Structure probing data (2A3 and DMS) for a 177-nucleotide construct. Conditions: 150 mM KOAc, 10 mM MgCl2 and 150 mM bicine (pH 8.5), 24 C.

[RMDB]
RNA sequence: GGGAACGACUCGAGUAGAGUCGAAAAAGCGUUUACGUAUCAGCCAGAUCGAAAGACUCGACAGCGAGUCGCCCACCGGCAACCACGAGCCGAACGGCACUUGAUCCAGUCGAGAAGCACGGUCCGCCCUUUACAACAACUUCGGUUGUUGUAAAGGAAAAGAAACAACAACAACAAC
Reactivity to 2A3 in 0.01 (KOAc 150mM, MgCl2 10mM, bicine 150mM(pH8.5), 24C), signal-to-noise 3, nucleotides 027 to 126: a010g040c030g030u060u070u070a090c090g030u130a080u160c040a030g060c040c020a040g000a060u020c020g030a140a130a020g070a040c010u010c010g000a010c020a050g070c010g000a010g010u020c060g010c000c000c000a020c010c030g010g000c040a060a070c060c060a110c130g100a030g020c010c010g010a040a000c020g020g000c000a010c030u010u040g020a070u070c070c050a040g000u000c020g000a010g030a030a000g040c030a000c040g020g000u010c000c010g020c000
Reactivity to DMS in 0.01 (KOAc 150mM, MgCl2 10mM, bicine 150mM(pH8.5), 24C), signal-to-noise 2, nucleotides 027 to 126: a180g010c050g010u010u000u010a050c110g000u010a020u000c100a080g040c070c080a080g030a140u020c020g000a080a160a200g000a120c000u010c010g020a020c080a190g000c020g000a020g010u000c090g000c010c010c010a080c300c020g000g000c020a040a100c070c070a150c220g000a120g050c050c000g020a080a300c220g000g000c020a020c040u000u000g000a040u000c030c080a060g020u000c000g030a050g000a110a090g000c120a100c040g000g010u010c000c080g020c070